[RMDB]
RNA sequence: GGGAACGACUCGAGUAGAGUCGAAAAGCGACGACGUUCGCGUCGUCGCAAAUUAACGCAGGCGUGGGACAACGCCAGAGAUAAACUCAAAUAGUCCCAAUAAAAUCUCACGGUUCGCCGUGAGAAAGAGGGUAGUAAAGUUCGCUUUACUACCCUCAAAAGAAACAACAACAACAAC
Reactivity to 2A3 in 0.01 (KOAc 150mM, MgCl2 10mM, bicine 150mM(pH8.5), 24C), signal-to-noise 2, nucleotides 027 to 126: g000c010g010a000c010g020a000c010g010u040u130c250g000c010g120u020c010g000u010c020g000c000a000a000a000u030u020a000a010c040g010c090a060g020g000c000g070u110g030g020g000a010c020a240a020c230g000c000c010a000g000a010g000a010u220a160a190a110c000u010c020a000a010a010u040a020g000u010c000c020c000a010a000u100a020a060a010a040u030c010u010c000a000c010g010g010u040u040c150g040c090c000g010u010g000a000g000a000a000a000
Reactivity to DMS in 0.01 (KOAc 150mM, MgCl2 10mM, bicine 150mM(pH8.5), 24C), signal-to-noise 2, nucleotides 027 to 126: g020c000g000a030c000g000a000c000g020u010u010c300g010c000g050u000c000g000u000c020g040c000a000a000a030u020u010a150a140c060g020c180a080g010g000c000g020u000g010g010g000a040c040a290a120c050g020c010c020a070g010a050g000a150u020a050a110a050c010u000c040a010a030a020u010a130g000u000c010c000c020a130a140u010a030a080a150a100u000c000u000c000a000c000g010g050u020u000c270g020c000c000g000u000g000a000g000a010a000a070